Background: This 177-nucleotide RNA was probed chemically with 2A3 and DMS.
RNA sequence: GGGAACGACUCGAGUAGAGUCGAAAACUUGGUACCGAAGCGUUGGCGUAUAUCGCACUUCUGGCCAUUUCCUCGUGGUGGCUUAUUAGCGAAUAUGGCUUUGGGCUAUAGCUAAUAUAUACGCAAAGGGUAUAACUUUCUUCGGAAAGUUAUACCCAAAAGAAACAACAACAACAAC
Reactivity to 2A3 in 0.01 (KOAc 150mM, MgCl2 10mM, bicine 150mM(pH8.5), 24C), signal-to-noise 6, nucleotides 027 to 126: c030u040u040g020g030u120a280c010c000g020a010a000g020c070g110u150u280g070g000c000g010u040a080u040a020u230c010g010c020a040c040u080u030c040u050g020g000c000c000a010u000u060u020c000c000u040c040g060u120g120g010u040g000g030c050u030u050a000u020u020a020g000c000g100a150a120u110a040u090g040g000c020u090u080u120g230g100g000c010u010a000u040a030g000c010u000a000a000u030a020u010a000u020a050c030g000c040a060a070a070
Reactivity to DMS in 0.01 (KOAc 150mM, MgCl2 10mM, bicine 150mM(pH8.5), 24C), signal-to-noise 3, nucleotides 027 to 126: c110u000u010g000g010u010a110c060c070g020a080a050g020c170g000u000u000g010g000c010g030u000a040u020a070u020c040g030c030a140c130u010u020c050u010g000g010c010c010a030u000u020u010c020c030u020c190g050u030g000g010u000g020g000c050u020u000a000u000u000a030g000c020g010a090a180u020a020u010g010g000c000u010u040u070g000g050g030c020u000a030u000a120g000c010u010a030a030u010a040u000a050u000a000c010g000c050a140a130a140
2A3 is a SHAPE reagent: it acylates the 2'-hydroxyl of flexible nucleotides of all four kinds. The RNA was probed in 150 mM KOAc, 10 mM MgCl2 and 150 mM bicine (pH 8.5) at 24 C.